[RMDB]
RNA sequence: GGGAACGACUCGAGUAGAGUCGAAAAAUGUUAAACACUUACUUGGAUAUCUGUAGUAAUUCUAGAGUCAAUACAUGCUAAAAAGCCACUAGUAAUAGUGGUUGCAUUUAUGACUUUGUAAUCCAAUAUCCUAGUGUGGAUUCGUCCACACUAGGAUAAAAGAAACAACAACAACAAC
Reactivity to DMS in 0.01 (KOAc 150mM, MgCl2 10mM, bicine 150mM(pH8.5), 24C), signal-to-noise 3, nucleotides 027 to 126: a100u020g010u020u020a060a060a140c160a090c070u000u010a070c110u010u000g000g000a060u000a080u030c080u010g000u050a040g000u060a050a070u020u010c010u010a060g000a020g000u000c000a010a030u000a040c140a010u000g020c000u030a020a110a120a130a110g000c000c010a000c000u000a000g000u030a090a120u000a010g010u000g000g000u000u000g000c000a000u000u010u000a030u000g000a000c010u000u000u010g020u000a100a090u000c020c000a030a190u010
Reactivity to 2A3 in 0.01 (KOAc 150mM, MgCl2 10mM, bicine 150mM(pH8.5), 24C), signal-to-noise 5, nucleotides 027 to 126: a000u150g010u110u040a090a120a010c060a020c100u150u140a010c020u050u010g030g000a040u040a040u170c090u160g170u080a080g030u080a130a160u110u080c030u060a030g000a000g020u000c020a020a040u000a030c010a020u000g010c010u130a190a080a100a070a000g010c000c000a000c000u000a010g050u170a040a210u020a050g020u000g000g000u000u010g000c000a000u000u010u010a030u010g000a000c000u030u030u110g030u020a040a050u000c000c000a030a050u010